[RMDB]
RNA sequence: GGGAACGACUCGAGUAGAGUCGAAAAUCUGAUGUGAUCAGCUUGUCACCCAGUAGCUGAGUGGCCUUUAGAGGUGGUACUUUAGAGGCUUAGUGUUGAGGCCAGAGACUGGACGUUCAGGAGCGGAGCUCAGAUCAAGUUUCGACUUGAUCUGAGCAAAAGAAACAACAACAACAAC
Reactivity to 2A3 in 0.01 (KOAc 150mM, MgCl2 10mM, bicine 150mM(pH8.5), 24C), signal-to-noise 2, nucleotides 027 to 126: u070c040u050g020a030u070g090u060g070a070u060c020a000g070c040u080u110g040u070c020a030c030c000c020a010g030u030a000g000c010u010g030a020g120u060g020g000c010c000u020u020u050a020g000a010g040g040u090g030g070u070a050c000u020u030u010a000g010a000g000g000c010u000u050a020g000u040g090u090u120g030a040g040g000c020c020a020g020a000g000a090c030u030g040g000a010c040g040u090u070c050a030g020g070a040g020c050g060g070a030
Reactivity to DMS in 0.01 (KOAc 150mM, MgCl2 10mM, bicine 150mM(pH8.5), 24C), signal-to-noise 8, nucleotides 027 to 126: u010c070u000g010a080u010g010u010g010a100u010c040a060g010c060u000u000g010u000c060a120c040c030c010a080g010u010a040g020c020u000g000a090g030u000g010g010c010c010u000u000u000a030g010a010g010g010u000g020g010u010a170c010u000u000u000a020g010a030g000g010c010u000u000a050g010u000g020u000u000g010a100g010g010c030c020a050g000a090g020a060c040u010g000g000a090c110g000u010u000c060a080g000g010a090g010c090g010g010a170